[RMDB]
RNA sequence: GGGAACGACUCGAGUAGAGUCGAAAAGGCCUGGUACACAGAGGCCGGCCUGCGAUCGUACCAUCGGUACCUAUGAUCCUAGGUACGGAUCCUAGCGCAGUCUCGUACGGCCGCGUACUGAUCCUCGUCUUCCACUAUUAUUCGUAAUAGUGGAAGAAAAAGAAACAACAACAACAAC
Reactivity to 2A3 in 0.01 (KOAc 150mM, MgCl2 10mM, bicine 150mM(pH8.5), 24C), signal-to-noise 9, nucleotides 027 to 126: g020g020c020c050u070g040g020u060a030c100a010c030a090g140a140g130g000c000c000g000g010c000c000u000g000c030g100a200u300c030g020u030a020c010c020a150u120c130g060g000u020a030c010c020u060a070u170g050a060u060c010c020u040a060g170g000u080a050c010g030g010a010u000c000c020u040a030g020c020g000c030a020g030u020c040u060c210g080u160a240c020g000g000c010c000g010c020g000u020a040c020u040g030a070u030c000c010u050c030g070
Reactivity to DMS in 0.01 (KOAc 150mM, MgCl2 10mM, bicine 150mM(pH8.5), 24C), signal-to-noise 9, nucleotides 027 to 126: g010g010c050c030u010g020g010u000a030c050a120c150a190g010a150g010g010c020c000g000g000c060c010u000g000c050g010a080u010c140g010u000a030c040c080a080u010c140g010g020u000a010c020c020u000a020u010g000a070u010c110c080u000a080g010g020u010a060c120g000g000a010u000c030c060u000a060g000c020g010c020a030g000u010c100u010c190g010u000a090c060g010g010c020c020g010c080g010u000a030c060u000g000a110u000c010c010u000c170g010